The record gives the reactivity of an RNA of 177 nucleotides to 2A3 and DMS. The RNA was probed in 150 mM KOAc, 10 mM MgCl2 and 150 mM bicine (pH 8.5) at 24 C. DMS adducts were read by reverse transcription with MarathonRT. Source: RMDB library M2PK90, as collected in RNAgym.
[RMDB]
RNA sequence: GGGAACGACUCGAGUAGAGUCGAAAAGACACGAGUUCCCGGAACAGACUCUCUCAACCGCCAAGUUUUGAAGGGACAAAAGUCCAAGUGCGCCUCAGCACAUAAGGCGGAACAAAACAAAAGCAAACAUAAUUAUUGUCUUCGGACAAUAAUUAUGAAAAGAAACAACAACAACAAC
Reactivity to 2A3 in 0.01 (KOAc 150mM, MgCl2 10mM, bicine 150mM(pH8.5), 24C), signal-to-noise 3, nucleotides 027 to 126: g010a010c020a020c140g050a060g030u030u010c030c000c000g030g030a100a040c050a050g070a050c010u020c010u000c010u010c060a040a090c020c000g000c010c010a090a050g010u010u030u150u220g120a110a060g080g000g020a000c010a010a300a030a050g000u000c010c000a090a050g010u010g030c000g010c020c050u130c070a010g000c040a030c000a050u100a030a020g000g000c000g000g020a010a010c050a010a040a000a010c040a000a120a000a000g070c010a040a050a020
Reactivity to DMS in 0.01 (KOAc 150mM, MgCl2 10mM, bicine 150mM(pH8.5), 24C), signal-to-noise 3, nucleotides 027 to 126: g010a070c110a070c090g020a160g030u010u000c020c010c010g040g050a090a110c100a090g010a050c040u000c010u000c030u010c040a170a130c120c070g020c030c030a120a180g000u000u000u000u020g010a140a090g020g000g010a030c020a070a060a090a140g010u000c000c020a110a110g020u000g000c000g010c060c060u000c090a120g020c060a040c130a110u000a030a070g010g020c000g010g000a060a090c060a030a050a050a050c050a030a010a110a080g020c100a060a040a130